The record gives the reactivity of an RNA of 177 nucleotides to DMS and 2A3. The reactions ran in a buffer of 150 mM KOAc, 10 mM MgCl2 and 150 mM bicine (pH 8.5), at 24 C. It was measured as part of the RMDB libraries RFM100 and RFMREP. For DMS the reverse transcriptase was MarathonRT.
[RMDB]
RNA sequence: GGGAACGACUCGAGUAGAGUCGAAAAGUGAAGCUACCACGUGUUGGAUUAUGGCUGAACGCCUCUAAGUCAGAAUCCGUGCUAGAUACAAUGACCUUGUCCCGCGCAUUUACCGUUGUGUCGAAAUAAAACUAACAAGGUUCGCCUUGUUAGUUUUAAAAGAAACAACAACAACAAC
Reactivity to DMS in 0.01 (KOAc 150mM, MgCl2 10mM, bicine 150mM(pH8.5), 24C), signal-to-noise 7, nucleotides 027 to 126: g010u000g000a140a100g010c020u000a050c060c010a050c060g010u030g010u010u020g000g000a070u000u020a070u000g000g000c000u000g010a190a130c110g000c020c010u000c030u010a130a070g010u010c030a040g000a040a040u000c020c010g010u010g010c090u010a030g000a080u020a060c120a050a060u020g000a090c120c010u000u000g010u010c010c000c020g020c130g020c120a070u020u010u020a080c150c090g000u000u000g020u010g000u000c030g010a060a080a090u000
Reactivity to 2A3 in 0.01 (KOAc 150mM, MgCl2 10mM, bicine 150mM(pH8.5), 24C), signal-to-noise 7, nucleotides 027 to 126: g080u070g050a070a020g030c010u050a060c060c000a050c040g120u120g080u110u180g020g010a030u050u040a060u140g020g000c010u040g030a070a030c060g030c010c000u010c030u040a030a030g010u000c030a020g050a040a030u030c020c030g020u040g000c010u050a060g000a100u080a110c050a050a140u160g040a090c000c000u040u060g060u040c010c020c000g010c010g000c020a110u080u100u140a120c060c040g010u020u010g010u010g020u030c020g010a040a050a020u060